This 177-nucleotide RNA was probed chemically with DMS and 2A3. The RNA was probed in 150 mM KOAc, 10 mM MgCl2 and 150 mM bicine (pH 8.5) at 24 C. For 2A3 the reverse transcriptase was SuperScript II with manganese. The DMS profile rests on 2,358 reads. For 2A3, 4,651 sequencing reads were counted. Values cover nucleotides 27 to 126.
[RMDB]
RNA sequence: GGGAACGACUCGAGUAGAGUCGAAAAGAUAUGGAAGCACUGCACACCUCAACAGCUCGGAAACGAGACAUGAGGGUGUUGCUUCCUAAGUCAAAGCCGUACUUGUACUUCGGUACAAGUACGGCAACCUAUUAAGCCGGUUCGCCGGCUUAAUAGGAAAAGAAACAACAACAACAAC
Reactivity to DMS in 0.01 (KOAc 150mM, MgCl2 10mM, bicine 150mM(pH8.5), 24C), signal-to-noise 4, nucleotides 027 to 126: g010a030u010a300u010g000g000a020a000g020c010a060c300u010g050c010a010c010a140c010c000u010c010a050a100c280a150g000c000u000c020g000g010a070a070a180c010g010a010g000a040c070a090u000g000a020g010g000g000u000g010u010u010g010c010u000u000c000c000u000a000a050g010u000c040a050a110a110g000c000c000g010u000a000c010u000u000g020u000a000c000u000u020c160g020g000u000a020c000a020a000g000u010a010c000g000g000c000a010a010
Reactivity to 2A3 in 0.01 (KOAc 150mM, MgCl2 10mM, bicine 150mM(pH8.5), 24C), signal-to-noise 2, nucleotides 027 to 126: g010a020u090a050u130g000g000a010a000g000c000a010c140u140g000c010a020c110a300c010c000u020c030a080a130c080a220g010c000u000c000g000g020a080a090a050c020g000a000g060a070c020a100u120g020a010g000g030g000u000g000u030u010g010c000u010u000c000c000u010a110a000g050u040c030a040a060a070g030c000c000g010u000a000c000u000u000g000u010a000c020u030u060c300g070g000u000a000c000a000a010g010u000a010c010g010g000c000a000a000